[RMDB]
RNA sequence: GGGAACGACUCGAGUAGAGUCGAAAAGGCCACUUCUUCGGAAGUGGCCAAAGGGAAACCAAGCAGUACGUACGUAUACGUACAGCAAAAAUAAAUACGAAAAAAGACUCAGCUUCGGCUGAGUCAACAUGAUAAUGCACUUCGGUGCAUUAUCAUGAAAAGAAACAACAACAACAAC
Reactivity to DMS in 0.01 (KOAc 150mM, MgCl2 10mM, bicine 150mM(pH8.5), 24C), signal-to-noise 2, nucleotides 027 to 126: g000g010c000c000a000c010u000u000c000u000u010c210g010g000a020a000g040u000g000g000c000c000a000a000a040g000g000g020a160a090a280c000c000a080a090g020c120a080g010u000a000c000g040u000a060c300g020u010a080u000a010c000g010u000a000c030a080g010c010a030a030a030a090a090u020a050a090a100u020a080c160g010a030a040a090a070a160a090g000a000c000u000c000a010g020c020u000u010c180g020g020c000u010g000a000g000u000c000a010a070
Reactivity to 2A3 in 0.01 (KOAc 150mM, MgCl2 10mM, bicine 150mM(pH8.5), 24C), signal-to-noise 2, nucleotides 027 to 126: g000g010c000c010a000c000u010u020c010u030u070c200g120g000a000a020g000u000g000g000c010c000a010a010a000g020g010g010a040a050a020c020c000a010a040g060c020a010g020u000a000c010g000u000a010c040g110u130a060u010a220c010g010u010a030c010a020g020c000a010a050a070a040a020u200a040a060a010u160a050c050g100a020a090a090a000a000a100g020a000c000u000c010a000g020c010u050u120c230g160g000c000u010g000a000g000u000c000a000a000
Notes: An RNA of 177 nucleotides, treated with DMS and 2A3 and read out base by base. Values cover nucleotides 27 to 126. 2A3 adducts were read by reverse transcription with SuperScript II with manganese. The reactions ran in a buffer of 150 mM KOAc, 10 mM MgCl2 and 150 mM bicine (pH 8.5), at 24 C.